[RMDB]
RNA sequence: GGGAACGACUCGAGUAGAGUCGAAAAGAAAUGAAUAAACCCAUGGAAACAGUGAGACAUCUACAGAGACAAAAUUAGGAAGGAAGGAAACAAAAGCAAUUUCAGUAUCUCUGUGCAAGGCCUGCAUACCUUUCCUUGCCAAUACCCGUGGAUUGGAAUACCGCCUAUGAUUCGUCAUAGGCGGUAUAAAAGAAACAACAACAACAAC
Reactivity to DMS in 0.01 (KOAc 150mM, MgCl2 10mM, bicine 150mM(pH8.5), 24C), signal-to-noise 1, nucleotides 027 to 156: g020a100a110a050u000g000a120a140u000a090a140a110c050c000c000a170u000g010g000a030a040a160c040a080g000u000g000a090g010a080c050a040u000c010u030a100c030a030g020a070g020a120c050a040a030a050a160u000u010a130g050g020a060a020g000g000a080a100g010g010a150a050a250c060a010a030a090a090g000c030a060a230u030u000u000c070a200g010u000a080u000c050u000c040u020g020u000g060c080a040a030g000g020c080c040u000g000c040a100u010a020c040c020u000u000u000c070c010u000u000g010c040c000a040a110u010a060c030c030c030g000u040g020g020a080u020u040g040g020a130
Reactivity to 2A3 in 0.01 (KOAc 150mM, MgCl2 10mM, bicine 150mM(pH8.5), 24C), signal-to-noise 1, nucleotides 027 to 156: g060a000a090a030u080g020a000a060u090a110a150a010c000c000c000a040u120g050g020a010a100a070c070a090g030u020g050a040g000a010c020a070u030c010u010a020c100a070g020a010g010a020c020a040a150a060a110u050u150a060g020g060a030a000g030g000a000a020g040g020a210a070a000c030a010a110a000a000g000c030a070a090u080u140u060c030a010g030u070a090u070c090u000c020u070g010u000g010c040a050a050g020g000c000c010u010g000c030a010u120a220c040c000u050u080u040c000c000u010u030g060c010c000a020a000u040a060c000c010c000g000u060g090g000a150u070u080g000g000a040
Source information: This 207-nucleotide RNA was probed chemically with DMS and 2A3. It was measured as part of the RMDB library OK3TST. For 2A3 the reverse transcriptase was SuperScript II with manganese. The RNA was probed in 150 mM KOAc, 10 mM MgCl2 and 150 mM bicine (pH 8.5) at 24 C. DMS adducts were read by reverse transcription with MarathonRT.